[RMDB]
RNA sequence: GGGAACGACUCGAGUAGAGUCGAAAAGAAAGAAAGAAGAAUCACCAGGAGGCAAGGAUCAUCAACUACGUUAUUCGGGCACCUUGAGUUGAGAGGAGCUAGUGGUGCGCCCGGCCUGGAGAUCAAAACACGACAGGCGGGUUCGCCCGCCUGUCAAGAUGUUUAAGAAGUUCGCUUCUUAAACAUCAAAAGAAACAACAACAACAAC
Reactivity to 2A3 in 0.01 (KOAc 150mM, MgCl2 10mM, bicine 150mM(pH8.5), 24C), signal-to-noise 1, nucleotides 027 to 156: g060a010a030a010g020a020a120a010g090a020a020g010a050a050u020c000a010c070c020a020g010g000a040g040g020c060a060a050g060g000a030u050c010a020u020c000a040a060c020u120a050c090g090u120u040a090u110u120c020g000g050g000c000a030c030c010u080u160g040a000g010u030u050g070a070g000a010g110g020a010g010c010u040a010g060u030g060g000u030g050c050g000c020c000c000g000g010c000c000u020g000g020a050g000a000u060c020a000a040a040a000c100a010c100g010a010c010a010g040g000c020g020g000g020u040u020c060g040c000c030c010g010c020c000u000g000u010c010a000a000
Reactivity to DMS in 0.01 (KOAc 150mM, MgCl2 10mM, bicine 150mM(pH8.5), 24C), signal-to-noise 2, nucleotides 027 to 156: g010a100a080a100g000a160a110a090g010a120a120g000a160a060u000c020a080c060c020a070g000g000a070g020g010c060a060a060g010g010a040u000c050a050u000c040a020a100c060u000a080c040g020u000u010a180u010u020c060g010g010g130c030a250c020c040u000u010g000a100g040u010u010g000a190g020a050g010g010a160g010c030u000a040g010u000g010g010u010g020c000g010c030c020c070g010g020c020c030u000g000g030a100g000a060u020c030a060a060a080a100c060a100c060g010a050c000a030g000g030c020g020g010g040u000u000c260g000c000c010c000g030c040c020u000g020u000c000a010a050